[RMDB]
RNA sequence: GGGAACGACUCGAGUAGAGUCGAAAAGCUCUGCGAUACAGAUCGAACAACAAAGAGAGAUCGAAAAUCUUAGAGGAGAGAACGAAUCUGUCGACUUCACUAGGACAUUGUCGAUCAGAGGUCCAAAGACCAUUCUUGGGUUCGCCUAAGGAUGGUCAAAAGAAACAACAACAACAAC
Reactivity to 2A3 in 0.01 (KOAc 150mM, MgCl2 10mM, bicine 150mM(pH8.5), 24C), signal-to-noise 9, nucleotides 027 to 126: g030c000u000c000u010g010c010g000a000u000a030c050a030g020a020u010c010g040a050a040c030a050a020c030a030a300a010g110a010g010a000g000a020u000c010g020a030a030a020a050u000c000u010u010a010g010a030g040g010a010g000a010g020a060a030c030g030a070a140u150c110u170g100u030c030g050a110c000u010u010c010a010c030u020a010g010g020a010c020a120u070u130g050u020c010g000a030u080c010a010g020a010g030g040u010c010c010a040a030a010
Reactivity to DMS in 0.01 (KOAc 150mM, MgCl2 10mM, bicine 150mM(pH8.5), 24C), signal-to-noise 9, nucleotides 027 to 126: g010c010u000c000u010g010c050g000a030u010a070c200a100g010a020u010c010g000a150a200c060a060a100c300a080a120a100g010a070g010a290g010a010u010c010g000a040a060a110a180u000c010u000u010a010g000a050g000g000a020g000a090g000a140a040c030g010a110a090u030c120u040g000u000c010g000a030c010u000u000c020a110c030u010a010g010g000a030c300a070u020u020g000u000c000g000a070u040c010a040g000a040g010g000u020c020c020a040a080a100
An RNA of 177 nucleotides, treated with 2A3 and DMS and read out base by base. The 2A3 profile rests on 73,074 reads.